[RMDB]
RNA sequence: GGGAACGACUCGAGUAGAGUCGAAAAUGUUGACCGAUAUUGACGAUGUCGGAUCGGUCGCCAAGCUGUGGAAUAGUCGAACGCUCAAGGAUGUAAUGGCAAAAAUUGAGCAUUACGCCGAAAAUCACCUCAUCAGUACCUUCGGGUACUGAUGAGGAAAAGAAACAACAACAACAAC
Reactivity to 2A3 in 0.01 (KOAc 150mM, MgCl2 10mM, bicine 150mM(pH8.5), 24C), signal-to-noise 1, nucleotides 027 to 126: u090g040u050u220g010a030c010c000g000a000u070a100u170u120g000a010c120g150a140u290g010u060c010g000g010a000u000c000g000g030u010c000g010c030c010a050a010g010c030u100g010u050g070g030a100a110u010a080g050u060c030g050a120a040c040g000c030u000c020a000a080g040g040a040u030g010u030a020a120u060g200g030c000a110a120a080a000a140u120u000g000a000g000c010a020u000u000a040c000g000c000c000g060a060a040a060a100u100c050a090
Reactivity to DMS in 0.01 (KOAc 150mM, MgCl2 10mM, bicine 150mM(pH8.5), 24C), signal-to-noise 1, nucleotides 027 to 126: u000g030u080u030g020a040c000c000g030a040u010a020u020u000g030a010c000g000a270u020g020u000c020g010g010a030u000c000g030g000u000c000g030c060c150a060a110g020c100u000g010u010g000g000a170a140u000a080g000u000c030g030a070a090c170g010c060u000c040a040a040g000g000a300u010g000u000a050a090u030g000g000c010a010a000a020a130a250u010u010g030a080g000c000a050u000u000a080c010g000c010c040g020a050a060a060a070u010c250a100
An RNA of 177 nucleotides, treated with 2A3 and DMS and read out base by base. Values are in units of 0.01, from 0 to 300, in steps of 10. The 2A3 profile rests on 819 reads. DMS adducts were read by reverse transcription with MarathonRT. It was measured as part of the RMDB library OK2TST.